[RMDB]
RNA sequence: GGGAACGACUCGAGUAGAGUCGAAAACGAUCAGUACGUUCGCGUACUGAUCGAAGCUACUGGAGACAGUAGCAAGUCUAAGACCUUGUUACGUGGAAACAAGGAAAAAUGGAGGAAGGACGGACCUCCAUACUUAGACAACCACGAACCGUCCAAACAUUACUGGACCUUUCGAGGUCCAGUAAUGAAAAGAAACAACAACAACAAC
Reactivity to 2A3 in 0.01 (KOAc 150mM, MgCl2 10mM, bicine 150mM(pH8.5), 24C), signal-to-noise 3, nucleotides 027 to 156: c000g000a000u010c000a000g000u000a010c000g010u010u070c190g020c010g100u000a000c000u000g000a000u000c000g000a000a000g000c000u000a000c000u000g020g020a020g020a030c000a010g000u000a000g010c000a020a000g000u010c000u010a000a030g010a180c010c000u020u010g010u030u050a150c210g080u170g130g090a050a020a010c020a010a000g060g000a070a090a020a030a010u040g000g010a000g010g020a080a300g000g010a010c040g020g010a090c000c000u000c010c000a000u000a010c000u000u000a000g000a000c000a050a040c040c040a090c090g050a010a010c000c010g000u000c000c000a000a000a000
Reactivity to DMS in 0.01 (KOAc 150mM, MgCl2 10mM, bicine 150mM(pH8.5), 24C), signal-to-noise 1, nucleotides 027 to 156: c040g040a010u000c000a070g020u000a010c020g010u000u000c300g000c010g020u000a000c020u000g050a000u000c010g000a000a140g010c000u000a010c020u010g030g000a300g000a260c040a050g030u000a000g030c000a090a080g020u000c000u000a080a090g000a300c000c000u000u020g020u000u000a040c100g010u040g040g000a300a000a060c000a040a000g060g020a000a070a040a090a120u000g010g020a080g000g010a120a040g010g000a020c030g050g040a300c000c010u000c000c000a040u010a000c060u000u000a050g010a020c000a080a080c090c030a140c110g020a080a100c050c040g060u000c000c000a260a070a180